[RMDB]
RNA sequence: GGGAACGACUCGAGUAGAGUCGAAAAGAUAUGGACUGGCUCAAGCGCGUGACUGAGCGAACUAUGGUGUCGGAAACGACACCACGAAUUCGCUCAGUCACGAACUACGCUGUGCCAGUCCUAAGUCGACUAUAACAGACUUCGGUCUGUUAUAGUCAAAAGAAACAACAACAACAAC
Reactivity to DMS in 0.01 (KOAc 150mM, MgCl2 10mM, bicine 150mM(pH8.5), 24C), signal-to-noise 3, nucleotides 027 to 126: g000a110u000a300u000g000g000a030c000u000g000g000c000u000c040a070a050g040c010g010c010g000u000g000a020c000u000g020a010g030c000g010a010a020c100u020a210u010g000g000u000g030u010c000g010g000a120a130a280c000g020a000c010a010c000c000a000c060g010a060a200u000u000c000g000c000u000c000a010g000u000c000a000c000g000a030a040c180u030a300c070g010c000u000g000u000g010c020c000a000g000u000c000c000u000a000a090g020u010c090
Reactivity to 2A3 in 0.01 (KOAc 150mM, MgCl2 10mM, bicine 150mM(pH8.5), 24C), signal-to-noise 1, nucleotides 027 to 126: g020a010u130a080u210g000g020a000c000u000g000g040c020u010c110a260a060g000c010g000c040g040u000g000a000c000u000g000a000g030c010g000a020a020c050u050a050u100g020g030u020g000u010c020g010g020a190a040a040c000g000a000c010a080c000c090a000c000g020a010a180u020u000c000g000c010u030c010a000g000u000c000a000c010g000a000a000c000u120a020c030g000c000u000g000u000g000c000c000a010g000u020c000c000u000a000a000g000u010c030
This 177-nucleotide RNA was probed chemically with DMS and 2A3. Reactivities are given for positions 27 through 126. Source: RMDB library TTRINS, as collected in RNAgym.